[RMDB]
RNA sequence: GGGAACGACUCGAGUAGAGUCGAAAAGAUAUGGACCAUGAGAACUCUAUCUAGGCGAUGAAAUCGGAAACGAUGGAGCCUAGGAUAGAGACAUGGUCCUAAGUCAAAACCCUGGUUCGCCAGGGAACAUUGUGAGUAUGUUCGCAUACUCACAAUGAAAAGAAACAACAACAACAAC
Reactivity to 2A3 in 0.01 (KOAc 150mM, MgCl2 10mM, bicine 150mM(pH8.5), 24C), signal-to-noise 6, nucleotides 027 to 126: g030a000u050a040u130g010g000a010c000c000a010u030g040a060g100a290a120c000u020c000u000a000u010c000u010a010g000g000c020g300a300u050g030a040a020a000u010c000g010g030a070a040a050c010g000a010u010g010g020a000g000c000c000u000a000g010g030a000u010a000g000a010g010a010c000a000u000g000g000u000c000c000u000a010a010g010u000c010a020a060a070a180c000c000c000u000g000g050u060u070c300g060c070c000a010g000g000g010a000a030
Reactivity to DMS in 0.01 (KOAc 150mM, MgCl2 10mM, bicine 150mM(pH8.5), 24C), signal-to-noise 7, nucleotides 027 to 126: g000a040u000a300u000g000g000a020c000c010a010u010g000a170g010a130a080c000u000c000u000a000u000c000u000a020g010g010c010g000a100u010g010a070a120a020u000c000g000g000a120a080a200c000g000a020u000g000g010a090g020c000c000u000a010g010g010a010u000a010g020a010g020a090c010a000u000g000g010u000c000c000u000a000a070g010u010c020a110a060a090a150c000c000c000u010g000g000u000u010c200g010c010c000a010g000g000g000a050a060
The record gives the reactivity of an RNA of 177 nucleotides to 2A3 and DMS. The RNA was probed in 150 mM KOAc, 10 mM MgCl2 and 150 mM bicine (pH 8.5) at 24 C. 2A3 adducts were read by reverse transcription with SuperScript II with manganese.